[RMDB]
RNA sequence: GGGAACGACUCGAGUAGAGUCGAAAAACGCGCUGGCCGCGCUGUCGGAUACGGCGGUGGCGGAGUUGCCGGCCCGGGCGACGGAAACCGGGUGCUGGCCGGCGCUGCUGGAUCUGGUGGCGGUCUAUAAAUCCGGUAUAUUCGUAUACCGGAUUUAAAAAGAAACAACAACAACAAC
Reactivity to 2A3 in 0.01 (KOAc 150mM, MgCl2 10mM, bicine 150mM(pH8.5), 24C), signal-to-noise 2, nucleotides 027 to 126: a000c080g030c020g000c100u040g020g000c000c020g040c020g030c080u090g030u050c010g020g000a010u010a080c010g010g010c010g020g010u030g230g030c040g070g050a290g050u090u060g040c020c010g050g000c010c000c000g020g010g160c090g070a150c080g090g100a170a040a040c010c010g000g010g020u000g030c050u150g040g000c000c000g050g020c020g000c000u010g000c010u010g000g000a010u020c000u030g000g040u020g050g030c010g000g030u020c010u040a110
Reactivity to DMS in 0.01 (KOAc 150mM, MgCl2 10mM, bicine 150mM(pH8.5), 24C), signal-to-noise 3, nucleotides 027 to 126: a100c100g000c120g010c110u000g010g000c010c030g010c050g020c040u010g020u010c010g020g000a070u000a030c030g010g010c000g020g020u000g020g030c010g010g010a170g010u010u010g000c020c010g000g000c010c000c010g010g000g010c110g000a080c140g000g000a080a110a070c010c000g000g000g020u000g010c010u010g020g010c000c010g000g000c010g010c010u000g000c030u000g010g000a030u000c010u000g000g020u000g000g010c010g000g000u010c020u010a130
Description: This 177-nucleotide RNA was probed chemically with 2A3 and DMS. The DMS profile rests on 7,206 reads. Source: RMDB library OK2TST, as collected in RNAgym. The reactions ran in a buffer of 150 mM KOAc, 10 mM MgCl2 and 150 mM bicine (pH 8.5), at 24 C.